Notes
The data come from the RNA Mapping Database (RMDB), library M2RFPK. Structure probing data (2A3 and DMS) for a 207-nucleotide construct.

RNA sequence: GGGAACGACUCGAGUAGAGUCGAAAACAUUACGAAUUCAGUCGCAAAUUGUAGAAUUAGCUACUCUACGAUUUAGUGAGCGUUAGUAACGUUGUAAUAUGAUAUAGUCUUUGGAAGGAUUAUAUUGGAGCCGCGGACAAGUUCGCUUGUCCGCGAAUCUCAUGUACUACUUCGGUAGUACAUGAGAAAAAGAAACAACAACAACAAC
Reactivity to 2A3 in 0.01 (KOAc 150mM, MgCl2 10mM, bicine 150mM(pH8.5), 24C), signal-to-noise 4, nucleotides 027 to 156: c020a060u090u180a040c030g080a120a150u140u130c070a080g100u030c020g000c010a010a000a000u010u010g000u000a010g010a030a030u060u020a060g030c030u060a030c010u000c000u000a000c000g010a000u010u010u080a090g000u010g030a060g070c030g010u040u100a030g020u050a080a040c070g000u010u000g030u040a100a090u080a120u270g010a000u000a000u000a020g010u000c030u060u080u150g160g020a110a060g030g000a020u000u020a010u000a000u010u060g040g040a070g110c100c020g000c020g010g000a000c000a000a000g010u040u090c120g010c130u010u000g010u000c000c000g000c000g000a000a000
Reactivity to DMS in 0.01 (KOAc 150mM, MgCl2 10mM, bicine 150mM(pH8.5), 24C), signal-to-noise 1, nucleotides 027 to 156: c030a060u010u000a020c000g000a060a090u000u010c080a120g000u000c020g040c000a020a020a000u000u000g020u000a010g010a040a060u000u000a270g000c240u020a130c070u000c000u000a010c000g000a020u000u000u000a050g050u010g010a080g010c170g000u000u000a040g000u000a040a030c050g000u000u000g000u010a070a080u000a130u000g020a040u000a010u000a000g020u000c010u000u000u000g010g010a250a190g000g000a020u000u000a030u000a030u000u010g010g010a140g020c110c000g050c020g040g000a010c020a050a050g030u000u000c300g070c010u020u000g010u000c000c030g070c000g010a000a010
The reactions ran in a buffer of 150 mM KOAc, 10 mM MgCl2 and 150 mM bicine (pH 8.5), at 24 C.